[RMDB]
RNA sequence: GGGAACGACUCGAGUAGAGUCGAAAAGAUAUGGAUCUUGUGGACAUGCGAGCUCGGAAACGAGCAAUCGCAACAGCCAUGGAUCCUAAGUCAAACUGUUAGGAGGCGUUCGCGCCUCCUAACAGAAUCAAACAUCCUAGUUCGCUAGGAUGUUUGAAAAAGAAACAACAACAACAAC
Reactivity to DMS in 0.01 (KOAc 150mM, MgCl2 10mM, bicine 150mM(pH8.5), 24C), signal-to-noise 5, nucleotides 027 to 126: g010a040u000a300u010g000g000a000u000c000u010u010g050u000g020g000a050c110a150u010g010c000g020a030g010c010u000c000g010g010a060a100a170c010g010a010g000c010a040a050u000c000g010c000a020a060c270a160g000c010c000a010u010g000g010a010u000c000c010u000a030a080g010u000c030a100a140a230c000u000g010u000u000a010g000g000a020g010g010c000g030u000u010c180g020c010g020c000c000u000c000c000u000a010a010c000a000g010a070a080
Reactivity to 2A3 in 0.01 (KOAc 150mM, MgCl2 10mM, bicine 150mM(pH8.5), 24C), signal-to-noise 2, nucleotides 027 to 126: g040a020u070a020u080g000g000a000u010c060u190u300g020u020g020g020a100c030a100u060g000c020g000a040g110c010u010c010g000g010a060a040a060c020g000a010g000c010a030a070u030c000g000c000a020a090c050a100g030c020c000a000u020g020g000a000u000c000c000u020a070a010g030u010c020a050a060a130c020u000g000u020u020a000g030g030a010g000g030c030g040u080u120c240g070c010g020c030c000u010c000c000u000a000a000c000a000g000a000a010
Notes
The data come from the RNA Mapping Database (RMDB), library TTRDEL. An RNA of 177 nucleotides, treated with DMS and 2A3 and read out base by base. For DMS the reverse transcriptase was MarathonRT. For 2A3, 3,375 sequencing reads were counted. The reactions ran in a buffer of 150 mM KOAc, 10 mM MgCl2 and 150 mM bicine (pH 8.5), at 24 C.